[RMDB]
RNA sequence: GGGAACGACUCGAGUAGAGUCGAAAAGCGUGUUCAAGGUCAAGGGCCCCAAAGGUGAACUGACCGUUCCCUACAACACGGAACUGACCGUUCGCCAGGACGGCGACCAGCUGCUCGUCGAGCGUCCCAGUCCGACUGAGUUCGCUCAGUCGGACUGAAAAGAAACAACAACAACAAC
Reactivity to 2A3 in 0.01 (KOAc 150mM, MgCl2 10mM, bicine 150mM(pH8.5), 24C), signal-to-noise 4, nucleotides 027 to 126: g080c050g040u110g070u160u150c180a140a070g040g000u010c060a070a140g110g000g070c000c000c000c060a050a140a000g000g000u060g000a040a030c000u050g050a080c010c000g010u000u000c000c020c000u110a150c150a170a000c050a050c060g000g020a060a010c010u060g040a070c000c050g000u020u020c000g000c060c040a030g070g040a030c050g000g040c010g010a020c000c010a030g020c010u040g000c000u000c040g070u010c020g020a010g000c010g020u000c010c030
Reactivity to DMS in 0.01 (KOAc 150mM, MgCl2 10mM, bicine 150mM(pH8.5), 24C), signal-to-noise 2, nucleotides 027 to 126: g100c130g020u010g000u000u000c080a180a150g060g050u000c000a040a300g000g000g010c040c010c030c260a110a040a240g030g000u000g000a000a040c120u000g000a080c090c110g000u000u000c000c030c010u040a260c300a060a130c200a060c220g000g000a130a000c000u000g000a100c100c180g000u000u030c030g000c040c080a150g000g000a000c130g000g000c300g000a060c030c030a060g000c000u060g000c100u090c010g000u000c060g000a000g000c000g000u010c000c010
Background:
The record gives the reactivity of an RNA of 177 nucleotides to 2A3 and DMS. The reactions ran in a buffer of 150 mM KOAc, 10 mM MgCl2 and 150 mM bicine (pH 8.5), at 24 C. It was measured as part of the RMDB library OK1LIB. DMS adducts were read by reverse transcription with MarathonRT. For 2A3 the reverse transcriptase was SuperScript II with manganese. The 2A3 profile rests on 2,097 reads.